The record gives the reactivity of an RNA of 170 nucleotides to 2A3 and DMS. The RNA was probed in 150 mM KOAc, 10 mM MgCl2 and 150 mM bicine (pH 8.5) at 24 C. For 2A3, 4,874 sequencing reads were counted. For 2A3 the reverse transcriptase was SuperScript II with manganese.
[RMDB]
RNA sequence: GGGAACGACUCGAGUAGAGUCGAAAAAGAGAAUACAAGAAAUGGAGGAAUUUCCCCAUAACGCCGGUGAAACUCUUGGAAGCGGAAGAAGGAAGGCGGAGAAAAGGAGCGGGCCCUCCGAUCCGAGUGAGUACCGGGUUCGCCCGGUACAAAAGAAACAACAACAACAAC
Reactivity to 2A3 in 0.01 (KOAc 150mM, MgCl2 10mM, bicine 150mM(pH8.5), 24C), signal-to-noise 3, nucleotides 027 to 129: a000g050a000g020a040a080u170a080c060a040a060g040a130a100a030u080g010g000a020g010g030a040a060u040u050u040c020c000c000c010a050u100a150a000c040g030c040c000g020g010u090g030a040a010a010c060u010c000u030u030g000g010a060a040g000c040g010g000a000a000g030a000a010g010g010a000a000g030g000c000g000g000a000g010a000a030a000a010g030g010a020g000c030g010g020g020c050c000c000u000c000c000g020a000u000c050c020g020a030g060u150g030a040
Reactivity to DMS in 0.01 (KOAc 150mM, MgCl2 10mM, bicine 150mM(pH8.5), 24C), signal-to-noise 4, nucleotides 027 to 129: a040g030a080g040a080a060u030a070c090a070a070g060a060a070a060u020g020g040a060g010g030a000a000u000u000u000c020c020c000c160a000u040a080a090c200g000c050c000g030g080u000g020a080a070a080c070u020c020u090u040g000g020a050a070g020c120g060g020a040a100g000a120a060g000g000a000a000g050g020c040g110g050a020g020a070a030a050a070g000g000a030g020c100g000g020g070c020c030c000u030c020c040g000a040u050c000c000g000a110g030u030g040a000